The record gives the reactivity of an RNA of 207 nucleotides to 2A3.
2A3 adducts were read by reverse transcription with SuperScript II with manganese.
Values are in units of 0.01, from 0 to 300, in steps of 10.
The reactions ran in a buffer of 150 mM KOAc, 10 mM MgCl2 and 150 mM bicine (pH 8.5), at 24 C.
Values cover nucleotides 27 to 156.
RNA sequence: GGGAACGACUCGAGUAGAGUCGAAAACAGGGGAGAUGGGAAAGAGUCCAAGCCACUGAAAGGAAAUGCGGCAGGGCUGGGGAGCGGCUGGCGGGAGCUGGCGGCCUUCAUGCCCCAAGGAGCUUUUUGACCAUGUAGCCAGGGAGGCUGUAGAGGAACGUAAAUGGAGGUUCGCCUCCAUUUACGUAAAAGAAACAACAACAACAAC
Reactivity to 2A3 in 0.01 (KOAc 150mM, MgCl2 10mM, bicine 150mM(pH8.5), 24C), signal-to-noise 1, nucleotides 027 to 156: c050a010g000g010g020g010a070g020a050u060g000g000g000a010a060a020g050a040g020u060c050c030a060a020g050c030c000a110c060u070g040a130a030a080g080g000a060a060a050u140g000c000g000g000c040a000g000g000g000c010u020g010g010g000g020a180g020c040g110g000c040u000g000g000c010g000g110g030a080g010c000u000g010g000c020g020g000c000c000u000u000c020a030u260g010c000c000c010c000a030a080g000g000a030g080c020u070u080u030u100u110g150a080c000c000a050u070g040u080a020g000c040c030a020g010g020g020a030g000g000c110u080g010u020a000g030a040g000g030a040